An RNA of 207 nucleotides, treated with 2A3 and read out base by base. The RNA was probed in 150 mM KOAc, 10 mM MgCl2 and 150 mM bicine (pH 8.5) at 24 C.
RNA sequence: GGGAACGACUCGAGUAGAGUCGAAAACCUUCCUUUCUUCGGGUUUCCUUUCCUCAGCUGGCGGCCUCGCCCGGAGUCUUCUUCUCCAGCGCAGGUUCUGACGCGACCGGUGGCAUCACCGAGUUUCGCUCGAACCUCAAUCUCCUUUUUCUCUAUCACUUUAUCUAGUCUUCGGACUAGAUAAAGUAAAAGAAACAACAACAACAAC
Reactivity to 2A3 in 0.01 (KOAc 150mM, MgCl2 10mM, bicine 150mM(pH8.5), 24C), signal-to-noise 3, nucleotides 027 to 156: c010c000u060u090c020c010u060u150u210c020u100u070c080g030g020g020u040u090u110c030c000u080u090u110c000c020u060c030a030g000c020u060g020g040c010g020g020c050c000u070c070g030c010c010c020g000g020a020g020u020c030u140u000c000u080u030c030u080c020c030a050g000c030g030c140a010g020g000u020u000c040u200g040a030c090g010c000g010a000c000c000g020g000u030g050g100c110a200u300c000a210c010c010g040a120g140u070u170u080c010g000c020u000c020g000a000a000c000c000u020c020a030a070u040c040u070c000c000u050u140u040u150u030c060u010c020u100a120u210c050

For 2A3, 1,659 sequencing reads were counted.